[RMDB]
RNA sequence: GGGAACGACUCGAGUAGAGUCGAAAAGACGAUCGCGGUGGUGGUACCGGGCCGCGCAGUCAACGAAAUGUCCUGCAGCACCGGGCAGUCGGCGCCAGGAUAGGUAAAGGUUGCGCCAGCCAAGCGCGUAUUAAUAAGACUUCGGUCUUAUUAAUACAAAAGAAACAACAACAACAAC
Reactivity to DMS in 0.01 (KOAc 150mM, MgCl2 10mM, bicine 150mM(pH8.5), 24C), signal-to-noise 9, nucleotides 027 to 126: g010a090c060g010a100u010c040g020c030g020g020u000g010g030u000g020g020u000a140c040c040g010g000g020c030c160g010c020g010c110a090g010u000c030a080a130c130g000a060a110a110u010g010u000c010c010u000g000c140a140g010c010a040c020c010g010g000g010c200a070g000u010c020g010g010c040g010c010c010a030g000g000a030u000a020g000g010u000a060a120a110g000g000u000u000g000c020g010c020c070a110g000c020c040a090a130g010c100g020c110
Reactivity to 2A3 in 0.01 (KOAc 150mM, MgCl2 10mM, bicine 150mM(pH8.5), 24C), signal-to-noise 5, nucleotides 027 to 126: g030a020c030g060a070u110c030g010c040g020g040u070g010g080u070g030g050u060a060c010c030g030g050g000c010c020g010c000g010c020a010g020u020c040a030a030c050g070a060a070a100u120g010u020c010c000u030g030c070a040g010c000a030c010c000g020g040g000c050a020g130u220c020g000g000c000g000c020c000a010g020g010a030u040a060g010g040u100a100a090a040g020g020u050u040g020c010g010c010c020a010g010c000c010a050a030g040c040g010c010

Notes
Chemical mapping of a 177-nucleotide RNA with DMS and 2A3. The reactions ran in a buffer of 150 mM KOAc, 10 mM MgCl2 and 150 mM bicine (pH 8.5), at 24 C.